The data come from the RNA Mapping Database (RMDB), library M2RFPK. The record gives the reactivity of an RNA of 207 nucleotides to 2A3 and DMS. The RNA was probed in 150 mM KOAc, 10 mM MgCl2 and 150 mM bicine (pH 8.5) at 24 C.
[RMDB]
RNA sequence: GGGAACGACUCGAGUAGAGUCGAAAAGAUCUGCGCCGAUCCGAAACGCUAGCAAACAGCCCGCAUCAUGUCGUCUCCUAACUUCGACGUGGUGAAAUACUGAGCAUAUGCGAGUAAGCCUGUUAGCAAUAGAUCAGAACGUUCGCGUUCUGAUCAACACCUUGUUUAUGUUCGCAUAAACAAGGUGAAAAGAAACAACAACAACAAC
Reactivity to 2A3 in 0.01 (KOAc 150mM, MgCl2 10mM, bicine 150mM(pH8.5), 24C), signal-to-noise 7, nucleotides 027 to 156: g020a040u020c030u080g040c050g030c050c040g020a040u050c020c030g060a070a070a030c060g010c050u040a020g010c030a050a030a110c040a050g010c010c010c010g020c000a010u020c010a010u020g010u010c000g020u010c030u100c110c060u130a130a150c060u070u060c030g020a020c010g020u010g020g000u030g010a030a020a000u160a030c050u060g040a020g010c010a060u040a040u300g010c020g010a030g060u050a030a030g040c030c030u030g010u060u050a010g000c030a080a120u040a160g010a000u000c000a000g000a000a000c000g020u060u050c170g020c000g110u000u000c020u000g000a000u000c000a000a000
Reactivity to DMS in 0.01 (KOAc 150mM, MgCl2 10mM, bicine 150mM(pH8.5), 24C), signal-to-noise 2, nucleotides 027 to 156: g000a070u010c010u010g030c070g030c030c060g010a080u010c070c050g030a090a050a090c050g000c030u010a040g030c020a030a050a110c070a270g010c020c010c010g010c010a070u010c080a030u000g000u000c020g000u000c020u010c100c050u010a060a080c060u000u000c030g020a060c020g040u000g020g000u000g000a050a060a130u010a120c050u000g000a110g040c060a110u000a090u000g020c000g000a040g040u000a070a150g040c050c020u000g020u030u000a030g030c000a070a210u010a090g000a030u000c000a010g010a020a010c010g030u000u000c300g030c040g000u000u000c000u020g000a000u000c000a030a140